[RMDB]
RNA sequence: GGGAACGACUCGAGUAGAGUCGAAAAAUCAAAGCCACUAUCCAUAACACUCUUAACGAUGCUCUUCAUAAUCUUAGUAUUUUUUUCAACUAAUUGUAAACGUGUUUCACCUGGCUUUUGAGGUGCAGCGUGACUGCGUGUUCGCACGCAGUCACGCAAAAGAAACAACAACAACAAC
Reactivity to 2A3 in 0.01 (KOAc 150mM, MgCl2 10mM, bicine 150mM(pH8.5), 24C), signal-to-noise 1, nucleotides 027 to 126: a010u150c070a070a020a070g000c000c070a030c030u120a190u020c120c060a090u100a240a010c030a000c070u190c000u270u080a220a000c000g040a040u080g000c100u030c030u200u090c000a040u080a220a150u070c000u000u000a000g000u020a080u000u170u020u010u060u000u090c110a080a000c030u000a010a040u120u090g070u110a030a070a030c110g040u000g000u010u000u040c020a050c020c000u070g020g000c000u150u040u000u060g180a060g080g040u020g000c000a000